[RMDB]
RNA sequence: GGGAACGACUCGAGUAGAGUCGAAAAGGCAACCUGGCCAAGGCGGCCGGGUUGUUCAACGCGCCGGCCUCGCAGCUGGCCCGGCUCGCGGCCGCCCUGCAGGAAAAGAAGGCCUGCCCAGGCCCAGGAGAUACGUCUGGUUCGCCAGACGUAUCUCAAAAGAAACAACAACAACAAC
Reactivity to DMS in 0.01 (KOAc 150mM, MgCl2 10mM, bicine 150mM(pH8.5), 24C), signal-to-noise 1, nucleotides 027 to 126: g000g000c000a000a040c010c000u000g020g000c090c020a220a160g000g000c130g000g050c040c010g020g000g010u000u000g000u010u010c120a110a140c030g010c300g000c030c040g010g000c000c010u010c190g010c240a180g000c040u000g000g040c000c020c020g000g010c030u000c000g000c060g000g000c000c010g020c050c010c020u000g020c000a070g000g000a040a040a090a150g020a180a270g010g000c000c010u000g000c020c020c030a100g010g000c040c020c060a090g000
Structure probing data (DMS) for a 177-nucleotide construct. Values cover nucleotides 27 to 126. For DMS the reverse transcriptase was MarathonRT. The RNA was probed in 150 mM KOAc, 10 mM MgCl2 and 150 mM bicine (pH 8.5) at 24 C.